[RMDB]
RNA sequence: GGGAACGACUCGAGUAGAGUCGAAAAGCAAAUGGUUCAGUGCGAUAACCGCACCUUUUUCUGCUGAUAGAUGAGAUGGAAUCAGGUAAUCACGCACCUUGGCUUCGAUACGGCAAGCAGCCAACGCAAAGUAACCACACUUCGGUGUGGUUACUUUAAAAGAAACAACAACAACAAC
Reactivity to 2A3 in 0.01 (KOAc 150mM, MgCl2 10mM, bicine 150mM(pH8.5), 24C), signal-to-noise 1, nucleotides 027 to 126: g050c020a060a060a140u090g040g020u100u180c140a090g050u000g020c010g070a190u050a110a040c070c010g080c000a030c020c000u130u070u000u000u030c040u020g040c000u020g010a130u140a020g260a090u150g050a040g050a150u040g090g000a040a050u020c010a040g020g020u000a090a020u070c050a020c110g000c000a010c020c000u030u000g070g000c090u080u110c150g040a040u020a190c070g060g050c020a000a080g040c000a000g040c040c020a030a040c050g010c010
Reactivity to DMS in 0.01 (KOAc 150mM, MgCl2 10mM, bicine 150mM(pH8.5), 24C), signal-to-noise 2, nucleotides 027 to 126: g060c080a050a070a100u000g000g020u010u000c130a120g030u000g050c030g000a210u000a080a140c120c060g040c080a050c010c000u020u000u000u000u000c060u000g000c100u000g000a110u010a080g010a080u000g020a040g010a100u000g000g000a060a060u030c070a080g010g000u010a090a090u000c060a050c130g030c040a060c050c060u010u000g010g020c000u010u010c100g000a160u000a110c140g000g020c100a080a100g010c050a050g000c010c040a010a070c220g000c140

Conditions: 150 mM KOAc, 10 mM MgCl2 and 150 mM bicine (pH 8.5), 24 C. This 177-nucleotide RNA was probed chemically with 2A3 and DMS. The DMS profile rests on 1,120 reads. For DMS the reverse transcriptase was MarathonRT. The 2A3 profile rests on 725 reads. Source: RMDB library OK2TST, as collected in RNAgym.